[RMDB]
RNA sequence: GGGAACGACUCGAGUAGAGUCGAAAAUGAGUAUUACACUUUUAGCGGGCUUACCACAAACCCAACAGGUCCUGUAGGCUUAAGGAUGAGGGAUGAAUCUGGAAAUGUAUUCUAUGACUCUAGAAGAAAGGGAUUAAGAGUUCUUCAGGUCGUUACACAAGGUACUACCAUUCGUGGUAGUACCUUGAAAAGAAACAACAACAACAAC
Reactivity to 2A3 in 0.01 (KOAc 150mM, MgCl2 10mM, bicine 150mM(pH8.5), 24C), signal-to-noise 4, nucleotides 027 to 156: u130g020a000g030u080a080u110u300a040c030a040c040u090u100u050u100a080g030c050g000g030g000c020u050u100a050c030c010a050c080a090a100a080c020c020c010a050a030c060a030g070g030u030c010c000u040g060u120a030g030g010c020u070u100a050a040g020g010a040u050g010a020g070g020g000a010u040g060a020a060u080c060u080g010g050a110a050a040u120g000u040a080u060u050c030u020a020u120g000a010c010u000c000u100a060g010a030a000g030a030a070a040g100g030g020a030u110u170a050a100g040a010g120u000u010c000u020u020c000a000g000g030u010c010g010u060u090a020c050a000
Reactivity to DMS in 0.01 (KOAc 150mM, MgCl2 10mM, bicine 150mM(pH8.5), 24C), signal-to-noise 1, nucleotides 027 to 156: u010g000a110g070u010a090u000u010a110c070a050c040u000u000u000u010a110g010c090g020g020g000c040u000u010a060c060c030a090c060a060a100a080c020c000c020a090a210c060a130g000g030u000c000c000u000g000u000a090g020g050c060u010u010a050a110g020g020a070u000g010a160g010g040g000a070u020g000a060a090u000c040u000g000g020a050a020a100u000g000u000a150u000u000c020u000a040u010g010a030c010u000c040u010a050g000a060a050g000a110a030a030g000g000g000a170u020u000a040a140g020a130g020u010u000c030u020u000c010a090g030g000u000c020g000u000u000a070c080a140